[RMDB]
RNA sequence: GGGAACGACUCGAGUAGAGUCGAAAAGGCAUAGCCCUGGAUCGCCGCCAGGGGAGUACGCAGCUCGUGGCUGGCGUCGGUGAUGAACUGCCGCAUCCGCAGAUCGGAAUCGACGCGAUGCGCCAGCUAGUCUGGCUAGUUUCGACUAGCCAGACUAAAAAGAAACAACAACAACAAC
Reactivity to DMS in 0.01 (KOAc 150mM, MgCl2 10mM, bicine 150mM(pH8.5), 24C), signal-to-noise 3, nucleotides 027 to 126: g010g020c030a120u010a160g010c010c020c000u010g000g000a090u000c110g000c060c070g000c010c010a040g000g010g000g010a060g020u000a060c110g000c120a130g010c050u000c130g020u010g000g020c010u000g040g000c000g020u000c010g010g010u010g010a300u020g000a020a070c030u010g000c030c110g000c130a070u020c100c120g020c020a040g010a050u010c020g000g020a300a040u000c000g000a030c020g000c020g000a030u010g010c000g020c050c010a040g000c070
Reactivity to 2A3 in 0.01 (KOAc 150mM, MgCl2 10mM, bicine 150mM(pH8.5), 24C), signal-to-noise 2, nucleotides 027 to 126: g090g000c100a120u150a110g070c010c010c010u000g010g000a080u120c090g050c120c030g020c000c000a020g000g020g020g000a030g050u050a050c110g000c120a040g010c020u040c040g100u070g070g000c010u030g020g000c000g000u030c000g000g030u030g000a020u040g020a040a010c000u010g030c040c000g140c090a150u100c100c090g010c020a020g010a060u020c010g020g050a020a020u030c000g000a000c000g000c010g010a030u050g010c020g000c010c000a010g000c000
Structure probing data (DMS and 2A3) for a 177-nucleotide construct. The DMS profile rests on 2,929 reads. 2A3 adducts were read by reverse transcription with SuperScript II with manganese. The RNA was probed in 150 mM KOAc, 10 mM MgCl2 and 150 mM bicine (pH 8.5) at 24 C. DMS adducts were read by reverse transcription with MarathonRT.